[RMDB]
RNA sequence: GGGAACGACUCGAGUAGAGUCGAAAAUCGAUAUUAAAAUGACCUGGCUUAUUAGUCCGAAUUCAGACAAAUAUAAACAAAUCCUGCUCAAUAUUAAAAUAUACUAACCGGUAAAAGAUAUUACUUACACCAUUUUAAAAUUCGUUUUAAAAUGGUGAAAAGAAACAACAACAACAAC
Reactivity to 2A3 in 0.01 (KOAc 150mM, MgCl2 10mM, bicine 150mM(pH8.5), 24C), signal-to-noise 2, nucleotides 027 to 126: u080c030g000a020u030a200u120u180a020a050a100a130u060g030a020c000c050u000g010g020c000u060u110a020u100u140a240g020u000c000c000g030a070a110u130u030c010a010g020a040c040a000a100a020u050a020u010a120a090a010c030a030a080a050u070c000c000u000g010c000u000c010a010a050u010a040u160u200a070a010a050a100u190a050u010a120c050u000a040a040c040c070g010g000u070a120a300a000a000g040a000u020a010u110u120a070c010u010u000a000

An RNA of 177 nucleotides, treated with 2A3 and read out base by base. 2A3 adducts were read by reverse transcription with SuperScript II with manganese. The 2A3 profile rests on 696 reads.